[RMDB]
RNA sequence: GGGAACGACUCGAGUAGAGUCGAAAAAGAGCCGGAUACGUCCGGCUCAACGGGGGAUACGUGUGGUGCCGUCCGCUCCCCCUAUGGCAUAACUAAUGCACCACACACUAGGCUACGGCCUAGUGAAAAAAGGUGUAUGUGUUCGCACAUACACCAAGUUGCUUAAAUCGUUCGCGAUUUAAGCAACAAAAGAAACAACAACAACAAC
Reactivity to 2A3 in 0.01 (KOAc 150mM, MgCl2 10mM, bicine 150mM(pH8.5), 24C), signal-to-noise 3, nucleotides 027 to 156: a000g010a000g010c010c020g000g000a040u040a060c170g070u000c000c000g000g000c000u010c000a000a000c000g000g010g000g000g010a030u020a110c020g030u030g000u010g020g000u000g000c000c000g020u010c020c060g100c050u030c000c010c000c000c000u030a160u200g090g020c100a130u040a230a040c030u100a200a040u080g000c000a010c000c000a000c000a000c000a000c000u000a000g000g000c020u030a010c300g100g000c000c000u000a000g000u000g000a040a000a000a010a020a010g000g000u000g000u000a000u000g020u000g010u010u020c140g030c050a000c000a000u000a000c000a000c000c000a000a000
Structure probing data (2A3) for a 207-nucleotide construct. The data come from the RNA Mapping Database (RMDB), library M2RFPK. Conditions: 150 mM KOAc, 10 mM MgCl2 and 150 mM bicine (pH 8.5), 24 C. Values cover nucleotides 27 to 156.